[RMDB]
RNA sequence: GGGAACGACUCGAGUAGAGUCGAAAACGACUACGCUCUGGCUGCUUAAUUGACGGCCACGUCGAACCGGUUCACGCCUGAUAGACCGGUGAGACGUAACUUCAUCAGGCUGGCAUCUGACGGCGCUCGCCGCGAAGGGUGCGAGAAAAACAGGUGAGGUAUGAUGGACGUUCGCGUCCAUCAUACCAAAAGAAACAACAACAACAAC
Reactivity to 2A3 in 0.01 (KOAc 150mM, MgCl2 10mM, bicine 150mM(pH8.5), 24C), signal-to-noise 1, nucleotides 027 to 156: c040g050a040c050u230a010c050g040c140u070c010u030g020g000c000u000g000c000u000u090a110a090u300u070g050a120c020g010g000c000c000a000c000g000u000c000g000a000a010c000c000g010g000u000u030c000a000c000g000c010c000u030g000a030u040a000g000a000c000c000g000g000u010g000a010g020a000c000g010u020a030a010c040u200u090c030a020u000c000a000g000g000c000u010g070g020c000a000u000c010u060g010a070c020g020g020c040g000c160u130c160g020c020c000g010c030g030a040a050g080g060g000u020g000c000g000a000g020a000a110a050a000a000c130a060g100g000u070g040a030
Notes:
The data come from the RNA Mapping Database (RMDB), library RSTRND. Chemical mapping of a 207-nucleotide RNA with 2A3. The reactions ran in a buffer of 150 mM KOAc, 10 mM MgCl2 and 150 mM bicine (pH 8.5), at 24 C.